[RMDB]
Chemical mapping of a 177-nucleotide RNA with DMS and 2A3.
For 2A3, 2,021 sequencing reads were counted.

RNA sequence: GGGAACGACUCGAGUAGAGUCGAAAAGGACCACGACGUGGUUUCGGCUCUGGUGCAGCUCGGCGCGGGGCCGUCAUCACUGGCACACACGAUUCGAUUGAUGGCCGGCCACGAGCUCGCCACCGAGAACCUAUCAAACCUUCGGGUUUGAUAGGUUAAAAGAAACAACAACAACAAC
Reactivity to DMS in 0.01 (KOAc 150mM, MgCl2 10mM, bicine 150mM(pH8.5), 24C), signal-to-noise 4, nucleotides 027 to 126: g010g000a080c000c010a060c030g020a150c200g020u000g030g020u000u000u010c020g000g010c170u010c050u020g020g010u000g020c090a040g010c020u000c000g010g020c300g020c050g000g040g050g000c010c010g030u000c000a030u000c030a080c110u030g010g000c150a090c140a120c100a080c130g000a130u000u010c150g020a050u000u000g000a020u000g000g000c020c010g010g010c040c080a220c040g020a030g000c010u000c090g000c040c010a080c020c000g010a080g000
Reactivity to 2A3 in 0.01 (KOAc 150mM, MgCl2 10mM, bicine 150mM(pH8.5), 24C), signal-to-noise 1, nucleotides 027 to 126: g090g040a060c000c000a020c050g220a100c190g030u040g000g060u000u030u100c030g010g000c000u040c130u160g040g020u020g020c110a010g000c000u000c000g060g000c170g040c050g280g110g060g020c000c000g000u000c010a020u030c000a010c120u130g080g000c100a030c000a010c020a020c210g110a130u110u120c020g050a040u020u300g010a020u010g000g010c000c050g010g020c000c020a020c020g010a000g000c020u030c030g000c020c000a020c000c010g000a020g000
2A3 adducts were read by reverse transcription with SuperScript II with manganese.
The DMS profile rests on 3,109 reads.
DMS adducts were read by reverse transcription with MarathonRT.
It was measured as part of the RMDB library OK2TRN.